[RMDB]
RNA sequence: GGGAACGACUCGAGUAGAGUCGAAAAGAUAUGGACGAGAGCGAUAAGCUAAUAUCGGAAACGAUAUGUAGCUUUUGACGCUCGAGUCCUAAGUCAAAAUCAUGCAACUGUUCGCAGUUGCAUGAAAGUAUUCCAUGCAGUUCGCUGCAUGGAAUACAAAAGAAACAACAACAACAAC
Reactivity to DMS in 0.01 (KOAc 150mM, MgCl2 10mM, bicine 150mM(pH8.5), 24C), signal-to-noise 3, nucleotides 027 to 126: g010a010u000a180u010g010g000a010c000g000a300g000a000g010c000g010a090u000a020a010g010c000u000a050a010u000a000u000c000g010g010a040a040a070c000g010a010u000a010u000g020u000a010g000c000u000u000u000u000g000a230c030g010c000u010c000g010a300g000u000c000c010u000a000a050g010u010c010a060a070a130a200u010c000a010u000g000c000a010a010c000u000g010u000u010c190g020c010a000g010u000u000g030c010a000u000g010a010a030a110
Reactivity to 2A3 in 0.01 (KOAc 150mM, MgCl2 10mM, bicine 150mM(pH8.5), 24C), signal-to-noise 3, nucleotides 027 to 126: g020a000u000a000u060g010g000a000c000g010a000g000a020g050c010g080a150u060a300a010g000c020u010a010a000u000a000u000c010g000g020a000a040a000c030g010a010u000a000u050g300u060a030g000c000u030u010u030u110g040a020c000g000c000u020c000g010a000g000u000c000c000u000a000a000g010u010c010a000a010a020a270u010c010a000u010g000c000a000a010c000u000g020u130u130c300g010c180a000g000u010u010g000c000a000u000g000a000a000a000

This 177-nucleotide RNA was probed chemically with DMS and 2A3. The DMS profile rests on 3,817 reads. For DMS the reverse transcriptase was MarathonRT. For 2A3 the reverse transcriptase was SuperScript II with manganese.